RNA sequence: GGGAACGACUCGAGUAGAGUCGAAAAAUACUUCUCAGGAUGGCGCGUUGCAGUCCAACAAGAUCCAGGGACUGUACAGAAGUUUCCUAUACCUCGAGUCGGGUUUGGAAUCUAAGGUUGACUCGCUAAAACUUUACGUGGUUCGCCACGUAAAGAAUCCACCUAUACUGUUCGCAGUAUAGGUGGAAAAAGAAACAACAACAACAAC
Reactivity to 2A3 in 0.01 (KOAc 150mM, MgCl2 10mM, bicine 150mM(pH8.5), 24C), signal-to-noise 2, nucleotides 027 to 156: a000u100a010c020u030u030c010u020c040a030g070g110a140u120g070g070c030g010c090g150u100u040g000c000a000g030u000c030c010a030a040c030a180a050g170a210u110c110c040a030g020g000g000a000c000u010g000u000a000c000a010g050a060a020g010u000u000u050c000c000u040a050u090a060c000c020u010c020g000a000g020u030c030g020g020g000u040u040u080g040g010a100a030u030c050u120a160a040g050g080u070u070g030a010c010u010c040g010c000u050a050a050a020a110c010u000u000u000a000c010g010u000g000g030u020u040c070g010c050c000a000c010g000u000a000a000a000g000a000a010
Reactivity to DMS in 0.01 (KOAc 150mM, MgCl2 10mM, bicine 150mM(pH8.5), 24C), signal-to-noise 2, nucleotides 027 to 156: a070u010a090c020u000u000c020u010c040a130g020g010a090u020g010g010c030g050c080g020u010u030g020c030a080g010u000c040c000a130a260c030a070a090g000a090u000c060c010a220g010g010g020a010c020u000g010u000a090c110a100g010a090a040g010u000u000u010c030c010u000a100u000a090c060c020u000c040g000a040g030u000c010g000g010g040u000u000u010g010g010a110a080u000c070u000a110a120g020g020u000u000g010a040c040u010c020g030c030u000a030a060a120a120c010u000u000u000a010c000g040u000g010g010u000u020c300g040c000c010a000c010g000u070a010a000a020g000a020a130